[RMDB]
Overview
The record gives the reactivity of an RNA of 177 nucleotides to DMS and 2A3. It was measured as part of the RMDB library M2PK90. The DMS profile rests on 4,920 reads. For 2A3, 4,727 sequencing reads were counted. 2A3 adducts were read by reverse transcription with SuperScript II with manganese. Conditions: 150 mM KOAc, 10 mM MgCl2 and 150 mM bicine (pH 8.5), 24 C.
RNA sequence: GGGAACGACUCGAGUAGAGUCGAAAAUUAAAGGAGUGAAGGUACAAGCGACAGUGUCCAACUGAGGUAAUCGACCACUGCCAGAACCAAGACGUGCGUAGUCAACUCAAAGGCAGAACGCAAAAAAGAUGGAGAUAAUGUUCGCAUUAUCUCCAUCAAAAGAAACAACAACAACAAC
Reactivity to DMS in 0.01 (KOAc 150mM, MgCl2 10mM, bicine 150mM(pH8.5), 24C), signal-to-noise 5, nucleotides 027 to 126: u010u000a050a110a100g020g000a050g020u000g000a090a080g020g010u000a050c120a060a070g010c040g010a090c060a030g020u000g000u000c050c080a080a060c100u000g010a060g020g010u010a050a080u010c070g000a060c070c050a070c060u010g000c030c030a070g000a080a100c080c060a040a060g010a080c130g000u000g010c060g050u000a050g000u000c030a050a070c070u010c090a020a050a070g010g000c020a030g020a070a060c070g010c090a000a030a060a050a060a060
Reactivity to 2A3 in 0.01 (KOAc 150mM, MgCl2 10mM, bicine 150mM(pH8.5), 24C), signal-to-noise 3, nucleotides 027 to 126: u150u100a080a030a030g040g020a020g020u060g040a080a050g040g000u050a050c030a080a040g030c030g060a030c020a040g030u020g030u080c030c040a060a020c060u050g030a020g070g040u070a060a070u050c020g050a050c030c030a030c030u030g020c040c010a030g000a060a030c030c010a040a020g090a040c080g080u090g020c020g020u060a020g030u020c000a010a010c010u050c050a050a040a000g010g000c010a000g070a090a020c030g000c000a010a040a060a010a040a030